The data come from the RNA Mapping Database (RMDB), library RFMREP. An RNA of 177 nucleotides, treated with 2A3 and read out base by base. The reactions ran in a buffer of 150 mM KOAc, 10 mM MgCl2 and 150 mM bicine (pH 8.5), at 24 C.
RNA sequence: GGGAACGACUCGAGUAGAGUCGAAAACGUCUAUACUCAGUGAAUCACUGAGUUCAUAGAACCUCUUCUACACGUCGACAAGAUUAUUUCUUGUGUUUGCCAGUCAUCGUAUGGUGCCUGGCAUUUUGUGAUUAUUCUACUUCGGUAGAAUAAUCACAAAAGAAACAACAACAACAAC
Reactivity to 2A3 in 0.01 (KOAc 150mM, MgCl2 10mM, bicine 150mM(pH8.5), 24C), signal-to-noise 1, nucleotides 027 to 126: c030g050u000c010u000a010u020a060c010u020c000a020g010u010g160a300a300u300c000a030c000u000g010a000g010u040u030c040a010u010a000g010a020a010c010c010u150c020u110u000c060u120a070c060a000c140g260u170c050g120a010c000a010a000g000a000u020u040a080u250u300u030c030u000u010g020u030g110u000u120u080g010c000c000a000g020u000c000a000u010c020g130u290a140u300g080g000u000g000c030c020u000g020g000c000a000u010u000u000u010